[RMDB]
RNA sequence: GGGAACGACUCGAGUAGAGUCGAAAAAGCCUGUAUCCUCUGUAGUGCUCAACACGAGGCUGGACUGGCAGAAUUGUUCUGCAAAAUGGGAAGGAUCACUGAUGCUGAGUCAGAGGCAGCAGCCUCAUACGUCACCAUUAUUCGUAAUGGUGACGUAAAAAGAAACAACAACAACAAC
Reactivity to DMS in 0.01 (KOAc 150mM, MgCl2 10mM, bicine 150mM(pH8.5), 24C), signal-to-noise 5, nucleotides 027 to 126: a080g010c130c010u000g010u000a090u000c020c010u000c040u010g020u000a070g030u010g000c030u000c060a070a060c060a060c100g010a070g010g030c050u000g000g000a230c050u000g010g010c010a020g010a060a190u000u010g010u000u000c010u000g000c020a060a030a080a120u000g020g000g010a160a110g000g000a070u000c030a100c070u010g000a070u000g020c060u000g010a100g000u000c050a060g010a060g010g020c070a110g000c110a050g010c020c020u000c060a230
Reactivity to 2A3 in 0.01 (KOAc 150mM, MgCl2 10mM, bicine 150mM(pH8.5), 24C), signal-to-noise 4, nucleotides 027 to 126: a030g030c000c010u000g050u100a210u070c010c010u010c030u060g050u100a090g050u050g130c020u000c040a050a050c040a030c100g020a010g000g030c030u030g000g050a000c020u020g070g000c010a020g000a020a080u280u210g140u230u010c020u000g020c010a050a060a060a150u210g030g040g000a040a040g050g000a060u050c010a030c120u060g040a090u060g030c030u030g010a040g060u060c030a020g020a030g050g000c010a020g040c010a010g010c010c000u030c000a040